[RMDB]
RNA sequence: GGGAACGACUCGAGUAGAGUCGAAAAGAUAUGGAAGUGCGGGAGGAACUACAGGAUGUAAUCGGAAACGAUUAUUUCCUGCCGAAGAACGCACUUCCUAAGUCAAAGGUUAUGUUCGCAUAACCAACAAUGUUGUCUAGUUCGCUAGACAACAUUGAAAAGAAACAACAACAACAAC
Reactivity to 2A3 in 0.01 (KOAc 150mM, MgCl2 10mM, bicine 150mM(pH8.5), 24C), signal-to-noise 5, nucleotides 027 to 126: g010a010u060a030u100g000g000a000a000g000u000g000c010g020g010g020a050g030g040a120a040c120u300a100c300a020g000g000a000u020g000u010a010a000u000c010g010g010a040a030a030c010g000a000u000u000a000u010u020u000c000c000u000g050c020c020g100a170a040g010a030a000c000g000c010a000c000u010u010c000c000u000a010a010g010u000c040a100a080a070g010g000u000u010a010u020g040u030u080c190g000c170a000u010a010a010c010c000a000a000
Reactivity to DMS in 0.01 (KOAc 150mM, MgCl2 10mM, bicine 150mM(pH8.5), 24C), signal-to-noise 7, nucleotides 027 to 126: g000a050u000a300u010g000g010a000a000g020u000g010c000g000g000g000a150g010g010a090a080c100u020a270c020a020g000g010a010u000g010u000a000a010u000c000g010g000a110a070a180c010g010a020u000u000a010u000u000u000c010c000u000g010c040c060g010a100a100g010a220a230c000g010c000a000c000u000u000c000c010u000a000a070g000u000c040a080a100a110g000g010u000u000a000u000g010u000u020c200g020c010a010u000a000a000c000c000a140a140
Structure probing data (2A3 and DMS) for a 177-nucleotide construct. 2A3 adducts were read by reverse transcription with SuperScript II with manganese. The 2A3 profile rests on 17,009 reads. DMS adducts were read by reverse transcription with MarathonRT. Conditions: 150 mM KOAc, 10 mM MgCl2 and 150 mM bicine (pH 8.5), 24 C.